[RMDB]
RNA sequence: GGGAACGACUCGAGUAGAGUCGAAAACUGCGCGGUUCGUGUCUAGCUUCGAGGAGGGGGUUGUGAGGUCGUGUGUGGUUGAGGAUGUGGGUGGCUUCCUCUACGCGGGUAGGCUGCCGGUUAGGAGAUCUUUACACUUGUUCGCAAGUGUAAAGAUAAAAGAAACAACAACAACAAC
Reactivity to 2A3 in 0.01 (KOAc 150mM, MgCl2 10mM, bicine 150mM(pH8.5), 24C), signal-to-noise 3, nucleotides 027 to 126: c010u050g000c040g010c020g040g080u060u040c040g010u070g070u060c040u080a060g020c030u090u080c100g040a070g020g030a060g030g020g000g010g010u060u100g050u040g080a070g000g040u040c060g010u010g010u040g010u030g050g010u040u090g030a060g020g000a040u090g020u100g100g040g040u050g020g040c000u020u000c000c000u000c010u030a050c140g010c050g030g000g030u020a030g000g050c020u010g010c000c030g010g010u050u040a060g000g050a080g010
Reactivity to DMS in 0.01 (KOAc 150mM, MgCl2 10mM, bicine 150mM(pH8.5), 24C), signal-to-noise 5, nucleotides 027 to 126: c040u000g010c080g020c040g010g020u000u000c070g020u010g000u010c040u010a100g010c060u000u000c100g010a130g010g010a090g010g000g000g000g020u000u000g010u000g010a080g010g010u000c070g010u000g010u010g020u000g000g000u000u000g010a090g010g000a080u010g020u000g000g000g020u000g000g000c050u000u000c020c010u000c020u010a090c150g010c100g000g010g010u010a050g010g010c030u000g010c020c020g000g000u010u000a100g010g000a150g000
Description
Source: RMDB library OK2TRN, as collected in RNAgym. Structure probing data (2A3 and DMS) for a 177-nucleotide construct. For DMS, 17,509 sequencing reads were counted. The reactions ran in a buffer of 150 mM KOAc, 10 mM MgCl2 and 150 mM bicine (pH 8.5), at 24 C. For 2A3, 3,991 sequencing reads were counted. For 2A3 the reverse transcriptase was SuperScript II with manganese.